[RMDB]
RNA sequence: GGGAACGACUCGAGUAGAGUCGAAAAGAAAUCACCUCCAGAGGACCCCUUAAGCGAACAAAGGAGUCUCCUACGGAAUAGGAGUAAGACCAUAGCGAUAGGGGGAGAUGCUAGGAGUUAGAGGAGAGUAUUGACUUAACUUCGGUUAAGUCAAUACAAAAGAAACAACAACAACAAC
Reactivity to DMS in 0.01 (KOAc 150mM, MgCl2 10mM, bicine 150mM(pH8.5), 24C), signal-to-noise 2, nucleotides 027 to 126: g000a090a130a160u000c000a060c180c030u000c000c050a140g010a090g000g010a180c010c000c000c010u010u000a070a260g010c010g000a070a130c160a060a110a080g000g000a300g020u000c000u000c000c000u010a080c110g000g000a060a300u010a000g010g000a020g000u010a070a070g000a130c020c030a040u000a070g000c000g010a110u000a050g020g000g000g010g000a030g000a130u040g000c030u000a100g020g000a040g000u000u020a120g000a070g000g010a080g030a210
Reactivity to 2A3 in 0.01 (KOAc 150mM, MgCl2 10mM, bicine 150mM(pH8.5), 24C), signal-to-noise 1, nucleotides 027 to 126: g020a000a130a050u000c010a030c000c010u000c000c020a050g000a010g180g040a130c050c010c000c000u040u020a140a030g000c020g040a100a030c050a110a200a080g010g000a040g080u000c000u000c000c010u010a050c140g300g170a120a120u030a070g020g000a010g000u040a130a010g050a040c000c020a010u060a030g020c010g020a080u070a050g000g000g040g020g000a000g000a000u140g050c000u050a060g050g000a020g020u100u130a040g000a050g090g030a090g020a030